This 177-nucleotide RNA was probed chemically with 2A3 and DMS. For 2A3, 1,828 sequencing reads were counted. It was measured as part of the RMDB library 15KREP. The RNA was probed in 150 mM KOAc, 10 mM MgCl2 and 150 mM bicine (pH 8.5) at 24 C.
RNA sequence: GGGAACGACUCGAGUAGAGUCGAAAAUUGACGCACCAUGCUAUUGCUUUAACGCUGAGGGUGAUGCAUCCUGGUCUUCUACUAUGAUCUUCUCUCUUCACCCCGUCGAGUGUGACGAGGAGUGUUCGUGUCCCUUUAAGUUCGCUUAAAGGGACACAAAAGAAACAACAACAACAAC
Reactivity to 2A3 in 0.01 (KOAc 150mM, MgCl2 10mM, bicine 150mM(pH8.5), 24C), signal-to-noise 2, nucleotides 027 to 126: u060u040g030a020c010g030c010a020c020c000a000u080g040c010u070a070u160u140g000c010u120u040u120a150a030c060g040c030u040g030a050g010g070g010u020g020a040u040g020c000a030u000c000c060u030g010g030u000c020u100u040c030u080a030c000u010a080u220g040a050u000c000u010u010c030u020c010u010c010u070u070c010a010c020c020c040c000g030u000c000g030a200g120u140g060u160g060a000c010g000a170g020g000a090g010u010g050u030u050c040
Reactivity to DMS in 0.01 (KOAc 150mM, MgCl2 10mM, bicine 150mM(pH8.5), 24C), signal-to-noise 1, nucleotides 027 to 126: u010u010g010a090c130g020c010a040c000c020a020u000g000c010u000a060u000u010g030c020u000u000u020a080a090c170g020c010u000g010a130g000g020g000u000g000a070u010g000c060a050u000c000c110u000g000g020u000c060u000u000c050u000a040c100u010a030u010g010a080u010c020u030u000c010u000c000u000c110u020u000c030a100c010c000c040c000g030u000c040g020a140g000u020g020u040g010a030c030g020a100g020g000a090g010u010g010u010u010c120
For 2A3 the reverse transcriptase was SuperScript II with manganese.